[RMDB]
RNA sequence: GGGAACGACUCGAGUAGAGUCGAAAAUUGGAGGUUCAUGCCAUCCCAUCAUCAAUUUCAGUCACCAAAUCUGUAGCCUAGGUGUCCUGAGACUCGAGGAUAACAUUAUGUAUCGGGCCAGGUCAAACGUCUAGUGAUCGUUCGCGAUCACUAGACGAAAAGAAACAACAACAACAAC
Reactivity to DMS in 0.01 (KOAc 150mM, MgCl2 10mM, bicine 150mM(pH8.5), 24C), signal-to-noise 2, nucleotides 027 to 126: u010u000g010g000a070g000g010u020u020c170a090u010g010c020c020a090u000c000c020c010a100u000c120a090u000c120a090a090u000u000u000c020a080g020u000c040a080c070c040a030a070a130u010c060u000g000u000a090g000c090c040u000a050g040g010u010g000u000c030c030u000g000a070g000a180c040u000c010g010a060g020g010a060u000a040a140c120a120u020u000a030u000g030u010a170u000c030g000g000g000c010c020a040g010g000u020c100a020a060a160